RNA sequence: GGGAACGACUCGAGUAGAGUCGAAAACAUUUCUCUGAUUGCCGGGAGGAUGGUGGCCUGUAGCUCAUGGUUGACACCUUGGGUAGACAUUGCCUUUGGGUGAGGAGAGCCACUUUGCUCAUAUCCAACCAGGGGUACUAUUCGUAGUACCCCUGGUAAAAGAAACAACAACAACAAC
Reactivity to 2A3 in 0.01 (KOAc 150mM, MgCl2 10mM, bicine 150mM(pH8.5), 24C), signal-to-noise 2, nucleotides 027 to 126: c010a030u020u070u030c030u020c020u060g130a140u090u190g090c060c020g070g000g000a020g030g030a040u050g050g040u020g020g030c030c030u070g030u090a010g030c010u010c030a020u030g020g060u040u120g060a010c000a030c080c000u030u020g010g000g000u030a030g030a060c050a130u030u130g030c000c000u020u090u120g090g000g000u030g040a020g060g040a050g010a020g010c000c040a010c000u060u050u050g020c020u010c010a030u090a070u140c030c050a000
Reactivity to DMS in 0.01 (KOAc 150mM, MgCl2 10mM, bicine 150mM(pH8.5), 24C), signal-to-noise 3, nucleotides 027 to 126: c110a080u010u000u000c000u000c020u000g000a120u010u010g010c060c060g010g000g010a080g010g000a060u000g010g000u000g010g010c040c060u010g010u000a140g000c020u000c020a060u010g000g010u000u010g020a190c190a080c010c000u010u000g000g000g020u000a060g010a090c150a130u000u000g010c020c010u000u010u000g020g010g020u000g010a070g020g000a150g010a100g000c060c090a050c100u010u000u000g020c020u000c060a080u010a100u000c050c100a130